RNA sequence: GGGAACGACUCGAGUAGAGUCGAAAAGCUACUUUCUUCGGAAAGUAGCAAAUAAGAAAUGAGCCAAUAAGGACGGUAAAAGGCUCAAAAUCCGCUCCUAAAAAAGCUCCAGGUUCGCCUGGAGCAACAUUGUAUACAGCUUCGGCUGUAUACAAUGAAAAGAAACAACAACAACAAC
Reactivity to DMS in 0.01 (KOAc 150mM, MgCl2 10mM, bicine 150mM(pH8.5), 24C), signal-to-noise 3, nucleotides 027 to 126: g000c000u000a010c000u010u000u020c000u000u010c160g030g010a020a010a020g010u000a000g000c000a010a030a020u010a070a120g000a040a080a300u000g000a020g000c000c000a060a080u010a200a100g000g020a070c110g000g000u010a070a100a130a240g000g010c000u000c010a030a020a130a230u000c040c020g000c100u000c000c020u020a000a060a130a070a110a110g000c000u000c010c010a020g000g010u000u000c210g000c010c010u000g000g020a010g000c000a000a030
Reactivity to 2A3 in 0.01 (KOAc 150mM, MgCl2 10mM, bicine 150mM(pH8.5), 24C), signal-to-noise 2, nucleotides 027 to 126: g000c000u000a000c000u020u010u000c000u020u020c110g130g010a000a000a000g000u000a000g000c000a000a000a020u020a000a010g040a010a070a080u050g000a010g000c020c010a030a000u100a110a050g150g020a040c050g000g010u030a060a080a040a090g020g020c000u020c020a050a040a000a020u000c000c010g040c150u020c000c030u100a130a150a040a030a020a020g000c000u010c010c010a010g030g020u020u040c150g040c060c000u000g000g000a000g000c000a010a000
The record gives the reactivity of an RNA of 177 nucleotides to DMS and 2A3. Reactivities are given for positions 27 through 126. For DMS the reverse transcriptase was MarathonRT.